[RMDB]
RNA sequence: GGGAACGACUCGAGUAGAGUCGAAAAUACAAGAUGGGGGGACGGAGAAGGCUAUGUUGGCCGGGCGACGGUUGUCCCGGUUUAAGCGUGUAGGCUGGUUUUCCAGGCAAAUCCGGAAGAAAAUGAAUCGUAGCGAUAUAUUCGUAUAUCGCUACGAAAAAGAAACAACAACAACAAC
Reactivity to DMS in 0.01 (KOAc 150mM, MgCl2 10mM, bicine 150mM(pH8.5), 24C), signal-to-noise 3, nucleotides 027 to 126: u000a080c100a050a090g010a090u000g020g000g000g020g000g020a100c050g000g000a060g020a120a100g000g020c050u010a050u000g020u020u000g010g010c010c000g010g000g010c300g020a100c130g010g000u000u010g000u000c010c000c010g000g010u000u000u010a040a090g000c010g010u000g010u000a070g010g010c010u000g020g000u000u000u000u000c020c020a160g000g000c080a040a050a080u010c020c020g000g000a070a080g000a070a040a070a060u010g000a080a100

An RNA of 177 nucleotides, treated with DMS and read out base by base. Source: RMDB library M2PK90, as collected in RNAgym. For DMS, 2,371 sequencing reads were counted.